[RMDB]
RNA sequence: GGGAACGACUCGAGUAGAGUCGAAAAUUCAAAAAAUUAAUCAUCGUAUUGAUGCAAUAGACGUAUUAGAAUUACGAAUUGAUCAAAUUGAAAAUGUCACAGUUGAUCAAGUGGCAGAAAUGAUUACAGUUUUGGUGUAGUUCGCUACACCAAAACUAAAAGAAACAACAACAACAAC
Reactivity to 2A3 in 0.01 (KOAc 150mM, MgCl2 10mM, bicine 150mM(pH8.5), 24C), signal-to-noise 2, nucleotides 027 to 126: u150u010c000a000a100a000a000a000a030u110u180a050a000u000c000a000u020c000g020u070a020u090u020g020a010u090g230c000a000a020u040a190g120a160c010g000u000a010u000u070a070g220a140a110u140u000a000c010g000a080a000u000u000g000a010u000c010a020a020a020u120u000g040a080a200a140a000u000g040u000c000a010c030a060g080u140u060g130a270u140c050a040a220g020u000g000g050c000a000g040a000a060a000u120g000a050u060u070a020c020
Reactivity to DMS in 0.01 (KOAc 150mM, MgCl2 10mM, bicine 150mM(pH8.5), 24C), signal-to-noise 1, nucleotides 027 to 126: u060u000c050a020a070a020a070a070a130u020u020a010a020u040c000a000u000c090g000u000a080u020u020g000a000u000g010c040a000a010u040a070g000a300c060g000u000a000u050u010a120g010a150a030u070u000a020c000g020a080a060u000u000g010a050u000c070a030a010a160u010u020g050a050a020a120a020u020g000u000c000a000c050a100g000u010u060g030a060u060c160a000a100g040u000g000g000c030a000g000a060a010a000u000g050a020u010u010a050c240